[RMDB]
RNA sequence: GGGAACGACUCGAGUAGAGUCGAAAAAGGAGCAGAUCCUGCUUAAACCCCCUUACGGGUUCGAGUUCAGCUACGACGCUGUCAAGAACGAGUAUGCUGACAAGAACCUCUACGCGGCUCUACGCAACCUCUAUGACCGCUACGAGCAGCUACUCAACUAUAUAAACUUAUUCGUAAGUUUAUAUAGAAAAGAAACAACAACAACAAC
Reactivity to 2A3 in 0.01 (KOAc 150mM, MgCl2 10mM, bicine 150mM(pH8.5), 24C), signal-to-noise 4, nucleotides 027 to 156: a010g070g010a010g000c020a010g060a300u130c020c020u050g010c010u130u090a230a280a200c040c010c020c010c010u130u120a100c100g020g010g000u010u010c010g000a020g050u120u050c010a000g000c000u000a020c030g220a110c030g040c070u120g140u240c140a160a030g030a130a030c010g000a010g000u000a010u300g000c010u000g000a000c010a060a050g000a020a020c010c000u010c010u010a020c030g000c000g060g000c040u000c020u040a020c050g020c050a070a120c020c030u090c020u100a140u190g030a060c010c010g000c010u020a010c040g010a000g010c020a020g020c000u030a030c020u040c020a010a090
Reactivity to DMS in 0.01 (KOAc 150mM, MgCl2 10mM, bicine 150mM(pH8.5), 24C), signal-to-noise 4, nucleotides 027 to 156: a060g010g030a060g010c070a170g010a130u010c070c010u000g010c030u010u000a050a140a110c030c000c000c030c100u000u010a060c100g000g020g020u000u000c010g000a300g010u000u000c040a020g010c010u000a040c010g020a110c020g040c020u010g000u000c230a150a240g020a040a030c020g000a200g030u000a020u000g050c010u000g010a060c080a130a220g000a040a040c020c010u000c060u010a050c080g030c040g030g040c020u000c010u000a130c050g010c020a100a110c040c050u010c050u000a170u000g000a040c060c030g010c020u000a100c110g000a110g020c020a070g020c020u000a170c010u000c000a050a300